[RMDB]
About this RNA: The record gives the reactivity of an RNA of 207 nucleotides to 2A3 and DMS. The 2A3 profile rests on 2,229 reads. Values cover nucleotides 27 to 156. DMS adducts were read by reverse transcription with MarathonRT.
RNA sequence: GGGAACGACUCGAGUAGAGUCGAAAAGGGGAGACUAGAACACGGAUAAACCUGUAAUCCAUAAAGAAGUGGCAGUUAAUCAUUUUGGCUGAGAGAGUGAGGGCUUGGGAUUUUGAGAGUGGAGCAUUGACUUUGUUUUUGUCUGCGCUUAGGCAAAUCAGGUAUAUUUAUUCGUAAAUAUACCUGAAAAAGAAACAACAACAACAAC
Reactivity to 2A3 in 0.01 (KOAc 150mM, MgCl2 10mM, bicine 150mM(pH8.5), 24C), signal-to-noise 4, nucleotides 027 to 156: g000g010g030g000a090g020a040c050u070a070g030a160a040c080a030c090g010g010a050u060a070a140a030c020c000u010g020u070a050a040u040c040c010a060u150a070a140a040g050a060a040g020u040g030g020c000a010g010u050u110a080a060u080c070a070u040u120u090u150g020g000c050u050g000a020g000a000g000a000g060u050g040a040g000g020g000c020u030u030g030g020g020a030u150u120u130u120g060a050g020a010g010u080g000g020a020g000c030a040u030u100g000a060c030u090u080u100g020u080u130u040u060u020g010u020c030u040g010c110g010c090u100u110a040g020g040c030a000a090a090
Reactivity to DMS in 0.01 (KOAc 150mM, MgCl2 10mM, bicine 150mM(pH8.5), 24C), signal-to-noise 2, nucleotides 027 to 156: g000g010g030g020a090g020a110c030u010a100g000a040a050c070a100c100g010g000a120u010a080a080a090c060c020u010g020u010a140a140u000c010c030a160u010a070a060a110g020a070a070g020u000g020g010c040a060g020u000u000a040a080u030c040a120u000u010u000u010g040g030c070u000g000a090g000a080g010a090g000u000g020a080g000g010g000c060u000u000g030g020g020a060u000u000u000u000g010a040g020a060g030u000g030g000a030g000c070a100u000u000g000a080c070u010u010u000g020u000u010u000u000u000g010u010c050u000g030c120g010c130u010u010a080g030g000c030a040a030a210